[RMDB]
Chemical mapping of a 177-nucleotide RNA with 2A3 and DMS. For DMS, 725 sequencing reads were counted. Source: RMDB library M2PK50, as collected in RNAgym. DMS adducts were read by reverse transcription with MarathonRT. The reactions ran in a buffer of 150 mM KOAc, 10 mM MgCl2 and 150 mM bicine (pH 8.5), at 24 C.
RNA sequence: GGGAACGACUCGAGUAGAGUCGAAAAUGACGUCGUUUCGACGACGUCAACAUAAAAUCAGCGGAAAAUAAUUAGGAGGCGUUACCGCUGAACGCCUCCAUACGAGAGGGCUAUUCGUAGCCCUCAAGUGGAUGGUUUGAUUCGUCAAACCAUCCACAAAAGAAACAACAACAACAAC
Reactivity to 2A3 in 0.01 (KOAc 150mM, MgCl2 10mM, bicine 150mM(pH8.5), 24C), signal-to-noise 2, nucleotides 027 to 126: u060g010a000c000g020u000c000g000u030u080u080c180g090a010c000g000a010c010g010u000c010a000a010c000a010u280a030a060a010a060u040c010a000g060c020g230g110a130a080a080a010u160a010a090u130u170a120g000g000a000g000g000c000g000u050u010a120c000c030g000c000u000g000a000a000c000g010c000c000u010c000c000a040u100a060c200g050a150g000a000g050g000g000c000u050a040u020u070c150g080u010a000g000c000c000c000u010c000a020a010
Reactivity to DMS in 0.01 (KOAc 150mM, MgCl2 10mM, bicine 150mM(pH8.5), 24C), signal-to-noise 1, nucleotides 027 to 126: u020g000a000c000g030u010c000g020u000u000u020c270g010a010c000g000a000c000g010u000c000a020a150c280a130u000a050a070a040a100u000c020a000g020c020g080g000a100a040a030a030u000a050a010u000u010a090g010g000a050g030g010c010g000u000u020a090c100c010g060c000u000g000a010a040c000g010c000c000u000c000c020a010u030a060c120g010a280g000a020g040g000g020c000u020a070u040u000c150g080u030a020g000c000c000c010u000c000a000a040